Chemical mapping of a 207-nucleotide RNA with 2A3. The 2A3 profile rests on 1,294 reads. It was measured as part of the RMDB library RNAMAK. Reactivities are given for positions 27 through 156. 2A3 adducts were read by reverse transcription with SuperScript II with manganese. The RNA was probed in 150 mM KOAc, 10 mM MgCl2 and 150 mM bicine (pH 8.5) at 24 C.
[RMDB]
RNA sequence: GGGAACGACUCGAGUAGAGUCGAAAAACCUUUGUGUCGGUUGUCAGAUAUUACCUUAACGUUUGACGCGUCUCCCAUUGGGAGACGCCGAGUUAAGGAGAUAUCUUGGAUUUACCGACACUCUGGUAAAACUAUUGAGAGUUCGCUCUCAAUAGAACCUUAAUUUGUCCUUCGGGACAAAUUAAGGAAAAGAAACAACAACAACAAC
Reactivity to 2A3 in 0.01 (KOAc 150mM, MgCl2 10mM, bicine 150mM(pH8.5), 24C), signal-to-noise 2, nucleotides 027 to 156: a000c000c000u010u000u000g000u010g000u000c000g000g020u010u030g020u010c020a000g010a000u000a020u030u060a300c010c010u010u000a020a000c030g160u110u150u300g120a090c050g000c000g010u010c010u000c000c050c190a300u230u300g010g010g000a030g000a010c000g080c020c020g010a030g000u000u000a010a010g000g010a030g000a000u000a000u020c010u020u130g120g020a010u170u100u210a010c000c000g000a000c000a000c000u010c000u000g000g000u060a020a070a040a080c010u000a010u000u030g020a030g000a000g000u000u200c210g100c060u000c000u000c000a000a000u000a000g000a000a000